[RMDB]
The record gives the reactivity of an RNA of 207 nucleotides to DMS.
Values cover nucleotides 27 to 156.
Values are in units of 0.01, from 0 to 300, in steps of 10.
In probing experiments dimethyl sulfate is read out at A N1 and C N3, which are open when not base-paired.
The reactions ran in a buffer of 150 mM KOAc, 10 mM MgCl2 and 150 mM bicine (pH 8.5), at 24 C.
RNA sequence: GGGAACGACUCGAGUAGAGUCGAAAAGAUAUGGACUGCACUCGCUUGGAUUUAUGGUGAAGAAGUUUCGGAAUCAAUUCCUAUUAUAUCGGAAACGAUAUAAUAGGAAUUGAUUCCGAAAUGUAAAGCCAUUGUCAGCGAGGAUAGUCCUAAGUCAGCAAAUACUCAAGUUCGCUUGAGUAUUUGCAAAAGAAACAACAACAACAAC
Reactivity to DMS in 0.01 (KOAc 150mM, MgCl2 10mM, bicine 150mM(pH8.5), 24C), signal-to-noise 1, nucleotides 027 to 156: g030a180u000a260u020g000g050a030c020u000g000c300a130c000u000c060g050c000u010u080g050g020a000u000u000u000a020u000g070g020u000g000a050a190g000a140a300g020u000u000u000c000g000g050a050a000u000c000a050a030u000u030c000c000u000a030u000u030a000u000a000u000c000g000g000a160a060a100c000g000a030u000a000u000a000a000u020a000g000g000a000a000u000u000g000a000u000u000c000c000g020a000a000a000u020g030u000a020a160a300g000c000c000a000u020u000g000u000c000a100g000c030g000a080g050g000a110u000a000g000u030c000c020u000a020a020g000u000c020a080